[RMDB]
This 177-nucleotide RNA was probed chemically with 2A3 and DMS. The reactions ran in a buffer of 150 mM KOAc, 10 mM MgCl2 and 150 mM bicine (pH 8.5), at 24 C. DMS (dimethyl sulfate) methylates the pairing face of unpaired adenines and cytosines. 2A3 adducts were read by reverse transcription with SuperScript II with manganese.
RNA sequence: GGGAACGACUCGAGUAGAGUCGAAAAUGACAAAGAGACAGAGUAGGGUUCUAGGCCCCUGUUCCUGGGGACUUGAAGGCGGUUUUACAUACUGGUCAGACACGGCUGGAGGCCAAGGUCAAGUUGAUCCAUGCACGUACUUCGGUACGUGCAUGGAAAAAGAAACAACAACAACAAC
Reactivity to 2A3 in 0.01 (KOAc 150mM, MgCl2 10mM, bicine 150mM(pH8.5), 24C), signal-to-noise 1, nucleotides 027 to 126: u280g050a000c000a000a240a010g070a000g060a000c080a070g040a050g120u190a140g040g000g020u020u040c030u050a020g000g050c010c000c000c070u020g020u130u020c000c000u010g010g000g000g060a020c010u050u040g000a000a010g000g000c020g060g000u030u030u090u070a040c000a000u130a060c000u050g050g000u000c030a090g010a070c000a020c070g000g000c000u000g050g060a000g000g000c010c000a010a010g140g000u050c120a020a000g060u000u030g000a030
Reactivity to DMS in 0.01 (KOAc 150mM, MgCl2 10mM, bicine 150mM(pH8.5), 24C), signal-to-noise 1, nucleotides 027 to 126: u000g000a080c110a030a240a050g000a000g010a130c060a040g000a000g020u000a000g000g000g000u000u000c070u080a110g010g000c000c070c000c060u000g000u000u000c060c100u000g010g000g000g030a100c060u000u000g000a030a030g000g010c070g000g020u000u000u000u000a100c220a080u000a050c000u000g000g000u000c010a200g000a140c100a000c130g000g000c000u000g020g000a150g000g000c000c000a010a180g000g000u010c010a030a100g000u030u000g000a140